The record gives the reactivity of an RNA of 177 nucleotides to 2A3. The 2A3 profile rests on 841 reads. Source: RMDB library M2PK50, as collected in RNAgym. The RNA was probed in 150 mM KOAc, 10 mM MgCl2 and 150 mM bicine (pH 8.5) at 24 C.
RNA sequence: GGGAACGACUCGAGUAGAGUCGAAAACAGAUGAUGUUCGCAUCAUCUGAAAUAAAAGCCAUGCAGGAAGGAUGGAGCAUGGCAACCAACCAACCAAAAUAAAAAUCUGUUCCUUCGGGAACAGAAACCUAACACCGUUCUUCGGAACGGUGUUAGGAAAAGAAACAACAACAACAAC
Reactivity to 2A3 in 0.01 (KOAc 150mM, MgCl2 10mM, bicine 150mM(pH8.5), 24C), signal-to-noise 1, nucleotides 027 to 126: c010a010g000a000u040g000a010u010g030u100u100c210g010c130a000u000c000a000u050c000u020g000a010a000a000u080a000a040a010a000g010c020c000a000u000g000c000a060g300g120a220a050g150g070a130u110g040g090a100g000c010a010u000g000g020c000a010a010c010c020a000a010c000c000a030a000c010c030a080a020a070a110u240a100a150a100a010a030u000c020u030g000u000u000c000c020u000u030c210g060g010g020a000a000c000a000g000a000a000a000